[RMDB]
RNA sequence: GGGAACGACUCGAGUAGAGUCGAAAAAGCAGUCGAUUCGUCGACUGCUAAUGGGUCGGGACUACAUCACAGCUUCUUCGCUAGCCCUCUUUGGACCAGUAAAAAAGAGCUUAUUCGUAAGCUCUAACGUAAACUGGUGUUUCGACACCAGUUUACGAAAAGAAACAACAACAACAAC
Reactivity to 2A3 in 0.01 (KOAc 150mM, MgCl2 10mM, bicine 150mM(pH8.5), 24C), signal-to-noise 2, nucleotides 027 to 126: a000g010c010a000g020u000c000g010a000u020u060c090g050u010c000g170a030c000u010g000c000u000a000a020u150g050g020g020u050c040g020g020g040a040c050u100a040c070a020u070c020a010c020a040g010c020u060u010c000u010u100c050g000c050u050a060g040c010c010c030u050c030u060u040u030g010g000a040c010c040a010g170u230a020a120a040a010a020a000g000a010g000c030u040u030a040u080u080c160g070u030a010a000g000c000u010c000u000a040a000
Reactivity to DMS in 0.01 (KOAc 150mM, MgCl2 10mM, bicine 150mM(pH8.5), 24C), signal-to-noise 2, nucleotides 027 to 126: a060g000c000a000g010u000c000g000a050u000u000c170g020u000c010g010a010c000u020g000c000u000a010a010u000g000g000g000u020c050g000g000g010a200c050u000a090c060a100u010c060a090c110a050g010c070u000u000c020u000u000c100g020c030u000a070g000c020c000c040u030c140u000u010u000g010g000a050c020c010a080g010u000a000a030a040a040a070a030g000a020g000c000u000u000a040u000u020c130g010u000a010a000g000c040u000c010u000a000a030